Chemical mapping of a 207-nucleotide RNA with DMS and 2A3. The data come from the RNA Mapping Database (RMDB), library M2RFPK. The 2A3 profile rests on 1,659 reads. Conditions: 150 mM KOAc, 10 mM MgCl2 and 150 mM bicine (pH 8.5), 24 C.

RNA sequence: GGGAACGACUCGAGUAGAGUCGAAAAUUACACUUAGAGCAUUUAGCCUGAUUACUCUUUAAAUCAAAUCAGGCAAUAGAGAGAAACUCGAGAGGUGAAAACCCCACAGCAUUCUGAAAUGUAUUUGAAGGCAACGCUACCUUCGGGUAGCGUUGAACAUGUACUAUUUCUUCGGAAAUAGUACAUGAAAAGAAACAACAACAACAAC
Reactivity to DMS in 0.01 (KOAc 150mM, MgCl2 10mM, bicine 150mM(pH8.5), 24C), signal-to-noise 1, nucleotides 027 to 156: u010u000a160c050a060c170u000u000a010g000a050g030c000a300u000u000u000a120g000c000c000u000g010a020u020u000a090c020u000c020u010u000u010a040a090a050u000c110a010a120a070u000c020a030g010g010c020a060a050u000a120g020a160g020a190g000a150a090a020c010u000c040g030a040g020a100g020g010u000g010a100a050a130a090c000c000c030c030a100c050a050g000c040a070u000u000c050u020g000a080a070a130u000g000u000a100u000u010u000g000a090a080g000g000c000a000a030c020g060c010u000a020c000c010u020u000c300g010g030g040u050a000g020c000g000u000u020g030a010a060
Reactivity to 2A3 in 0.01 (KOAc 150mM, MgCl2 10mM, bicine 150mM(pH8.5), 24C), signal-to-noise 2, nucleotides 027 to 156: u070u040a050c060a000c110u170u170a030g000a010g020c030a050u020u040u090a030g040c000c000u010g000a000u010u040a050c020u050c050u160u290u130a010a030a040u140c080a000a000a030u000c000a000g000g000c000a000a000u020a000g040a010g010a010g040a040a070a040c020u020c030g060a070g000a040g070g040u040g020a040a070a040a010c010c000c070c000a060c040a040g090c010a030u110u080c040u110g050a100a120a100u070g030u110a190u100u160u130g060a060a030g100g020c000a000a000c000g000c000u010a010c000c020u010u050c070g000g010g000u020a000g000c000g010u000u000g000a000a000